[RMDB]
RNA sequence: GGGAACGACUCGAGUAGAGUCGAAAAGGAGCUCGAGAUGUUCUUAGGACAACUAAGGGCAUCUGUAUGUUCUAAGUUGUCCUUAGGGCAUACUGUAGUGUGUGUGGAGUACACACACUAUAGAUAGGUUGUGUACUCCACACAACCUGUCCGAGCACGAGACGUGAAUGUUCGCAUUCACGUUUCGAAAAGAAACAACAACAACAAC
Reactivity to 2A3 in 0.01 (KOAc 150mM, MgCl2 10mM, bicine 150mM(pH8.5), 24C), signal-to-noise 9, nucleotides 027 to 156: g130g030a070g010c010u010c010g050a050g010a050u010g010u020u000c000u000u040a010g010g000a010c010a030a000c010u030a020a070g010g010g000c030a020u040c030u040g010u090a010u010g000u000u000c010u020a050a030g000u010u010g010u020c030c000u000u010a000g010g000g000c030a030u120a200c070u080g100u230a090g010u040g010u000g000u000g010u010g100g050a010g040u080a000c000a000c000a010c010a010c010u020a020u050a070g210a090u140a040g030g020u030u020g000u010g000u010a020c020u020c010c000a000c000a000c000a000a000c000c000u020g050u020c040c010g000a000g000c000a010
Reactivity to DMS in 0.01 (KOAc 150mM, MgCl2 10mM, bicine 150mM(pH8.5), 24C), signal-to-noise 4, nucleotides 027 to 156: g000g010a160g010c010u000c010g020a090g010a030u000g010u000u000c010u000u000a020g020g010a080c060a040a070c010u000a130a050g010g000g010c010a020u000c120u000g020u000a030u010g020u000u000c010u000a090a100g010u000u000g010u000c060c010u010u000a020g020g000g000c000a020u020a060c050u000g020u000a030g020u010g010u000g030u000g000u000g020g010a180g020u000a080c010a010c010a020c050a050c010u000a060u000a060g010a170u000a040g010g000u000u000g030u000g020u000a070c080u000c080c080a120c010a000c000a010a010c000c000u020g010u010c000c010g010a020g020c020a290